[RMDB]
The data come from the RNA Mapping Database (RMDB), library OK2TRN. Structure probing data (DMS) for a 177-nucleotide construct.
RNA sequence: GGGAACGACUCGAGUAGAGUCGAAAAUGAGUUACUGAAAAGAUAAUCUAGCAACGUAGAAGAAUGUGUUAGGGAGCCAUUUUCCUAUGUGUAACUCUGUACUGUGGAUAAACCUUAUUUUGGGUACGAAUACCGUGGUCUUCGGACCACGGUAUUCAAAAGAAACAACAACAACAAC
Reactivity to DMS in 0.01 (KOAc 150mM, MgCl2 10mM, bicine 150mM(pH8.5), 24C), signal-to-noise 1, nucleotides 027 to 126: u000g000a030g000u000u000a000c020u000g000a110a140a110a080g000a180u010a160a120u010c100u000a060g030c120a050a040c110g040u000a020g010a050a060g020a050a020u000g010u020g000u020u020a050g000g030g000a180g010c050c010a010u000u000u000u000c000c090u010a010u000g000u000g000u000a020a020c020u000c010u000g010u020a090c060u000g010u030g030g000a130u000a040a110a070c050c030u010u000a170u000u000u000u000g030g000g000u000a040c230